[RMDB]
RNA sequence: GGGAACGACUCGAGUAGAGUCGAAAAAGUAGCGCAGUUACGACUGCGCUACAUGACUUGUUUUGAUGAAAAUUUAAGAUCAUUACUCUUCGGAGAUUGAUGAAAUUAAUUCUGCUUCCCUGAUUAAUCGGUUUUUCAUAUUCGUAUGAAAAACCGAAAAAGAAACAACAACAACAAC
Reactivity to DMS in 0.01 (KOAc 150mM, MgCl2 10mM, bicine 150mM(pH8.5), 24C), signal-to-noise 1, nucleotides 027 to 126: a130g040u000a000g010c010g020c000a000g010u020u000a080c130g000a040c000u000g000c000g020c000u020a000c000a050u010g000a200c100u010u000g020u000u000u010u000g000a120u000g000a030a080a050a060u000u000u000a010a020g040a170u000c000a000u020u000a080c000u000c010u000u030c110g000g010a020g000a080u000u040g010a000u000g000a010a070a090u020u000a040a040u000u010c130u000g000c070u010u000c000c000c000u010g010a040u000u010a050a110
Reactivity to 2A3 in 0.01 (KOAc 150mM, MgCl2 10mM, bicine 150mM(pH8.5), 24C), signal-to-noise 3, nucleotides 027 to 126: a000g060u020a010g000c020g000c000a000g020u020u100a080c170g040a010c060u000g000c000g000c000u000a000c000a000u010g010a020c100u060u040g030u120u140u110u020g200a140u050g090a030a000a080a220u080u120u080a080a040g030a070u000c000a000u010u210a180c010u010c000u060u100c230g110g000a000g010a010u060u140g000a010u000g000a010a010a010u040u030a010a010u060u030c000u050g030c030u030u000c000c000c000u020g110a110u030u200a080a150

Chemical mapping of a 177-nucleotide RNA with DMS and 2A3. The reactions ran in a buffer of 150 mM KOAc, 10 mM MgCl2 and 150 mM bicine (pH 8.5), at 24 C. High DMS reactivity at an A or C suggests that its Watson-Crick edge is free. For 2A3, 1,179 sequencing reads were counted. For 2A3 the reverse transcriptase was SuperScript II with manganese.